[RMDB]
RNA sequence: GGGAACGACUCGAGUAGAGUCGAAAAAACUGCAAUCAGCAGUAAGAGGUUAUCCCCAUGAACACAUGGUGGCAAAAUAAUAUGGAAGCCUAUAUUGGUCCGAUCCUAUCAUUGAUGGGCAUAGGGAUUAGCGGUCUAAUCGCUUGGGUUUGGGCGCAGUAGUGUUCGUAUUCGUACGAACACUACUAAAAGAAACAACAACAACAAC
Reactivity to 2A3 in 0.01 (KOAc 150mM, MgCl2 10mM, bicine 150mM(pH8.5), 24C), signal-to-noise 3, nucleotides 027 to 156: a000a000c050u050g000c060a070a140u100c030a190g000c000a010g010u040a060a050g040a020g060g030u060u120a050u120c020c010c000c000a000u010g080a120a000c160a020c010a140u030g000g050u070g040g000c030a000a070a030a110u140a140a070u070a100u120g010g030a040a020g000c000c000u040a050u030a060u210u120g010g020u010c030c030g010a020u030c000c050u040a040u120c060a100u050u200g060a050u050g040g020g000c100a090u040a070g050g010g010a030u030u050a000g000c000g030g000u050c070u110a100a070u080c010g020c050u060u030g000g010g070u060u130u100g040g000g030c050g020c020
Reactivity to DMS in 0.01 (KOAc 150mM, MgCl2 10mM, bicine 150mM(pH8.5), 24C), signal-to-noise 2, nucleotides 027 to 156: a040a040c000u000g000c040a210a130u000c190a180g020c020a040g010u000a090a050g010a100g040g010u010u000a110u000c000c000c000c010a070u000g010a100a040c120a120c030a050u010g020g070u020g000g020c070a080a080a070a050u000a090a080u000a070u000g040g000a130a210g020c040c010u000a100u000a190u010u000g020g030u010c020c020g000a170u000c030c010u010a020u000c020a090u000u000g020a070u000g000g010g000c080a060u000a100g020g040g000a070u010u000a060g000c020g000g010u000c090u000a060a060u000c010g030c020u000u010g030g000g010u000u000u010g000g000g030c040g000c080

This 207-nucleotide RNA was probed chemically with 2A3 and DMS. The RNA was probed in 150 mM KOAc, 10 mM MgCl2 and 150 mM bicine (pH 8.5) at 24 C. Reactivities are given for positions 27 through 156. For 2A3 the reverse transcriptase was SuperScript II with manganese.